[RMDB]
RNA sequence: GGGAACGACUCGAGUAGAGUCGAAAAAGCUGCUCUAAAUCGGCGGAAAGGACCCCGCUAUCGGGAGCGGCUAGCAGCGAGGGUUGCCGCUCCAGCCGCGCUAUGAAGCAGCCAUAGCAGAUUUACAAUUACUGAGUAAUUUCGAUUACUCAGUAAUAAAAGAAACAACAACAACAAC
Reactivity to 2A3 in 0.01 (KOAc 150mM, MgCl2 10mM, bicine 150mM(pH8.5), 24C), signal-to-noise 6, nucleotides 027 to 126: a000g010c010u010g010c010u030c050u140a120a170a150u160c080g030g000c030g010g030a100a100a060g120g030a050c020c010c020c000g010c040u120a120u190c080g100g010g010a020g010c010g010g010c010u020a030g040c060a010g060c020g110a150g050g110g020u070u060g030c010c000g000c000u000c010c000a000g010c010c040g090c010g000c000u010a010u020g030a060a010g000c010a000g000c000c000a010u010a000g000c020a010g030a110u170u180u120a040c040a060
Reactivity to DMS in 0.01 (KOAc 150mM, MgCl2 10mM, bicine 150mM(pH8.5), 24C), signal-to-noise 9, nucleotides 027 to 126: a080g000c000u000g000c000u000c190u010a060a090a060u010c120g010g020c010g010g000a040a080a140g010g010a190c060c030c010c010g010c040u000a060u010c140g010g010g010a030g010c000g000g000c020u000a020g020c080a050g010c080g010a100g010g000g010u000u000g010c020c000g000c050u000c010c010a090g020c100c100g020c240g000c010u000a010u000g000a090a030g000c000a010g000c010c010a010u000a010g020c010a240g000a110u010u010u010a090c170a100